[RMDB]
RNA sequence: GGGAACGACUCGAGUAGAGUCGAAAAAAGAACACGGACGCGAACCCGUAAGUGGAACCCUGAUCCUUUAUUGGGGGGUACACUCGAGGAGUGGAAGGCGCUGCCCGGGGGGAACCGGAUUUACCUAAUAGAGAGCAGUUCGCUGCUCUCAAAAGAAACAACAACAACAAC
Reactivity to 2A3 in 0.01 (KOAc 150mM, MgCl2 10mM, bicine 150mM(pH8.5), 24C), signal-to-noise 7, nucleotides 027 to 129: a000a000g070a030a010c050a000c050g040g030a010c050g010c010g050a030a030c010c000c000g000u060a060a020g010u020g030g040a070a050c010c000c000u010g040a070u130c040c050u120u150u140a110u150u100g010g000g000g000g000g000u030a050c030a010c010u040c020g050a030g010g010a030g010u070g030g020a050a030g070g000c060g020c030u060g020c000c000c000g000g000g000g000g000g000a000a010c020c000g000g000a000u070u050u080a070c010c000u090a060a040u100a090
Reactivity to DMS in 0.01 (KOAc 150mM, MgCl2 10mM, bicine 150mM(pH8.5), 24C), signal-to-noise 6, nucleotides 027 to 129: a060a100g040a060a060c150a040c010g000g000a040c080g040c050g050a070a060c040c020c020g000u020a000a020g040u000g000g040a180a130c010c010c020u030g010a060u020c120c080u020u020u050a090u000u000g020g010g020g010g020g110u090a120c080a030c020u000c050g010a080g030g020a040g030u020g000g050a050a040g000g000c000g030c080u030g010c040c050c000g010g020g010g010g030g000a020a020c080c070g000g000a040u040u030u040a100c100c010u100a040a100u070a090
Source information
Conditions: 150 mM KOAc, 10 mM MgCl2 and 150 mM bicine (pH 8.5), 24 C. The record gives the reactivity of an RNA of 170 nucleotides to 2A3 and DMS.